[RMDB]
The data come from the RNA Mapping Database (RMDB), library OK1LIB.
An RNA of 177 nucleotides, treated with 2A3 and DMS and read out base by base.
Conditions: 150 mM KOAc, 10 mM MgCl2 and 150 mM bicine (pH 8.5), 24 C.
The DMS profile rests on 1,443 reads.
RNA sequence: GGGAACGACUCGAGUAGAGUCGAAAAGCAGGGCACCUCAUCGGCAGCAGUUCCGCGGGAGUUCUAGCGGAGCGUACCAUUUUCUUUGUCGGAGUGUUCUCUGUCACUCUCGAAAGGCGUAUAUGUCCACGCAGUACGUGUUCGCACGUACUGCGUGAAAAGAAACAACAACAACAAC
Reactivity to 2A3 in 0.01 (KOAc 150mM, MgCl2 10mM, bicine 150mM(pH8.5), 24C), signal-to-noise 4, nucleotides 027 to 126: g050c020a020g000g000g010c010a020c010c010u000c020a230u190c010g000g000c010a020g010c010a030g040u010u000c010c000g000c000g010g060g030a300g100u300u170c050u090a060g010c010g000g010a000g000c010g000u050a050c010c000a080u150u070u080u150c140u170u170u070g020u000c000g000g010a020g010u200g010u120u010c000u000c020u040g030u120c010a050c070u060c000u010c030g060a050a050a040g000g020c050g080u150a110u080a100u300g030u050c000
Reactivity to DMS in 0.01 (KOAc 150mM, MgCl2 10mM, bicine 150mM(pH8.5), 24C), signal-to-noise 1, nucleotides 027 to 126: g040c060a000g000g000g000c150a010c000c000u020c060a100u000c090g000g030c000a010g090c180a110g010u000u050c000c000g050c000g030g000g000a200g010u080u000c070u000a090g010c070g030g000a000g000c030g000u000a130c180c220a210u070u000u000u040c240u000u010u000g030u000c000g000g000a030g000u060g000u000u000c050u030c000u000g000u000c120a140c050u000c000u000c000g060a040a020a110g000g010c010g000u000a030u040a140u000g010u040c070